This 177-nucleotide RNA was probed chemically with 2A3 and DMS. The data come from the RNA Mapping Database (RMDB), library OK2TRN. The DMS profile rests on 7,315 reads. Conditions: 150 mM KOAc, 10 mM MgCl2 and 150 mM bicine (pH 8.5), 24 C. Reactivities are given for positions 27 through 126.
[RMDB]
RNA sequence: GGGAACGACUCGAGUAGAGUCGAAAAAGAACGAAGGACGAAUAGACAUUGCAACGAUGGCCUAUCGGAAGCCCAGCGACCUGGAUGGCUUUAUCCAGCAAAUGCCCAAGGCGGACAUGCGUGUGAACGCAUCAUUCACAUUCGUGUGAAUGAUGCGAAAAGAAACAACAACAACAAC
Reactivity to 2A3 in 0.01 (KOAc 150mM, MgCl2 10mM, bicine 150mM(pH8.5), 24C), signal-to-noise 4, nucleotides 027 to 126: a000g060a060a000c030g010a070a000g030g020a000c040g050a050a070u060a110g060a030c040a050u060u140g040c090a120a060c110g030a020u060g050g000c010c010u070a130u080c020g030g020a060a040g020c000c010c000a010g030c020g030a060c000c010u020g000g020a010u040g110g000c000u120u110u080a040u010c010c020a000g010c000a080a070a050u120g010c000c040c000a030a050g060g020c060g000g020a030c010a060u100g010c040g040u110g030u030g110a070a010
Reactivity to DMS in 0.01 (KOAc 150mM, MgCl2 10mM, bicine 150mM(pH8.5), 24C), signal-to-noise 6, nucleotides 027 to 126: a060g010a130a070c060g030a060a070g010g010a100c060g020a110a080u000a050g010a100c040a050u000u000g010c140a100a080c150g010a050u000g010g000c070c020u000a050u010c040g000g000a070a110g000c030c020c030a100g010c070g010a110c180c020u000g000g010a050u000g010g010c140u010u010u000a040u010c020c030a050g000c110a040a060a060u010g000c010c020c030a070a070g010g000c060g000g010a030c070a030u000g000c060g000u000g010u000g010a070a150